[RMDB]
RNA sequence: GGGAACGACUCGAGUAGAGUCGAAAAGCUGUGUCUGCCCAUGCACCUGUAUUUUUGUUGACGUGCUCGUGGUGGUGGCUGCAUGGACACGUCGGUGUGUCUGUGUGUGUGUGUGUGUGGCGGACAGGGUAUGGCGCAGCUUCGGCUGCGCCAUACCAAAAGAAACAACAACAACAAC
Reactivity to 2A3 in 0.01 (KOAc 150mM, MgCl2 10mM, bicine 150mM(pH8.5), 24C), signal-to-noise 1, nucleotides 027 to 126: g070c070u060g000u000g020u070c000u010g010c060c000c000a030u050g010c010a000c050c000u230g090u140a300u080u300u000u030u070g180u100u080g060a040c100g070u120g000c060u020c000g090u150g080g000u120g000g070u010g000g060c000u000g030c000a010u000g000g050a000c000a000c030g040u130c250g130g050u230g040u010g010u100c030u000g080u000g020u000g000u000g000u030g000u000g000u000g030u000g000u110g000g010c000g020g020a000c000a000g050
Description
An RNA of 177 nucleotides, treated with 2A3 and read out base by base. Reactivities are given for positions 27 through 126. The RNA was probed in 150 mM KOAc, 10 mM MgCl2 and 150 mM bicine (pH 8.5) at 24 C. The data come from the RNA Mapping Database (RMDB), library OK1LIB.